RNA sequence: GGGAACGACUCGAGUAGAGUCGAAAAACGUAAGUGUUCGCACUUACGUAGCGCUUCACAGUAGCUCAGUGGUAGAGCUAUCGGCUGUUAACCGAUCGAUCGUAGGUUCGAGUCCUACCUGUGAAUCCAUCUGUGGCAUAUCGUUCGCGAUAUGCAAACUUACAGUUAGAUUCGUCUAACUGUAAGUAAAAGAAACAACAACAACAAC
Reactivity to 2A3 in 0.01 (KOAc 150mM, MgCl2 10mM, bicine 150mM(pH8.5), 24C), signal-to-noise 8, nucleotides 027 to 156: a000c000g000u000a000a000g000u010g060u110u170c280g040c080a000c000u000u000a000c000g000u000a010g030c170g000c020u020u010c000a000c010a010g010u020a000g010c010u000c020a080g040u100g150g250u180a010g000a000g000c000u000a010u000c010g020g000c030u150g070u300u210a070a030c010c000g020a030u020c030g070a130u090c010g010u000a000g000g000u000u000c000g000a000g010u010c000c000u000a010c000c000u000g000u000g000a020a030u020c030c010a110u050c100u140g180u180g130g000c000a000u010a000u000c010g030u050u050c260g000c000g090a000u000a000u000g000c000a020a020
Reactivity to DMS in 0.01 (KOAc 150mM, MgCl2 10mM, bicine 150mM(pH8.5), 24C), signal-to-noise 8, nucleotides 027 to 156: a030c010g030u000a000a020g040u000g010u000u010c300g030c020a010c010u000u010a000c000g020u000a020g010c080g010c060u000u000c010a040c030a030g010u000a040g020c010u000c000a300g020u010g020g010u000a060g000a030g000c000u010a030u000c010g010g000c030u020g040u000u010a120a050c010c010g000a020u000c180g010a030u000c010g010u000a030g000g000u000u000c020g030a300g000u000c000c000u000a030c010c000u000g010u000g000a020a060u000c030c010a040u010c040u000g000u000g020g020c000a010u000a010u000c000g040u000u000c300g070c000g010a020u000a010u000g020c010a010a020

Conditions: 150 mM KOAc, 10 mM MgCl2 and 150 mM bicine (pH 8.5), 24 C. An RNA of 207 nucleotides, treated with 2A3 and DMS and read out base by base.